Chemical mapping of a 207-nucleotide RNA with 2A3.
[RMDB]
RNA sequence: GGGAACGACUCGAGUAGAGUCGAAAACAAUGAUGAGCAAUUCGCUAUUGCCGCCUAAAAACGGUUAGCCGGGGCUGCUAGAGCCUUGUUACCAAAGAUAGCCGGCUGGGACUUCGGUCCCCGUCGUUGAAGGGCUGUACGUUCGCGUACAGCCCAAGAGAAAAGUGUUGUUCGCAACACUUUUCUCAAAAGAAACAACAACAACAAC
Reactivity to 2A3 in 0.01 (KOAc 150mM, MgCl2 10mM, bicine 150mM(pH8.5), 24C), signal-to-noise 1, nucleotides 027 to 156: c030a000a130u170g070a060u090g010a030g120c050a080a210u200u180c050g000c020u050a050u060u210g000c000c000g040c010c010u050a050a030a000a000a000c000g020g000u040u030a010g020c020c030g030g010g000g010c000u020g000c020u040a010g000a020g090c000c010u000u030g060u060u080a040c020c020a000a050a000g060a040u010a010g010c010c000g000g000c000u010g000g000g000a000c000u010u040c230g050g000u000c000c000c000c000g000u000c000g020u000u090g060a040a070g010g010g000c000u000g000u000a030c000g010u020u060c270g010c000g100u000a000c000a000g020c030c010c000a000a000
The data come from the RNA Mapping Database (RMDB), library M2RFPK. The reactions ran in a buffer of 150 mM KOAc, 10 mM MgCl2 and 150 mM bicine (pH 8.5), at 24 C.